Conditions: 150 mM KOAc, 10 mM MgCl2 and 150 mM bicine (pH 8.5), 24 C. Chemical mapping of a 207-nucleotide RNA with 2A3. The 2A3 profile rests on 506 reads.
RNA sequence: GGGAACGACUCGAGUAGAGUCGAAAACGAAGGGGGAAGAACCCCUUAUAAAACCAUCAUCUCGUGAGAACUCACCCGCUGUCAUGAGAAUAGCAUGGAGGAACUUCGCCCAUGAUCCAAUCACCUCCCUCCCUUGGCAUGUGGGAAUUACAGGUCAGCUGGUAAAUACGUUCGCGUAUUUACCAGCAAAAGAAACAACAACAACAAC
Reactivity to 2A3 in 0.01 (KOAc 150mM, MgCl2 10mM, bicine 150mM(pH8.5), 24C), signal-to-noise 1, nucleotides 027 to 156: c170g060a120a090g000g020g000g000g000a070a000g000a020a010c030c000c000c020u000u010a000u000a000a080a000a040c000c000a010u090c000a020u060c010u090c060g040u020g000a060g070a140a130c040u060c070a200c000c020c010g200c040u060g030u010c020a010u050g000a030g000a050a130u240a120g120c190a030u070g000g000a000g010g160a090a090c120u100u000c130g140c000c000c000a040u090g040a010u110c040c000a010a080u150c040a060c000c100u000c000c000c000u000c000c000c000u010u010g020g040c000a000u040g000u020g010g080g000a030a000u000u000a040c010a000g030g080u150c030a000
Description: The data come from the RNA Mapping Database (RMDB), library OK3TST.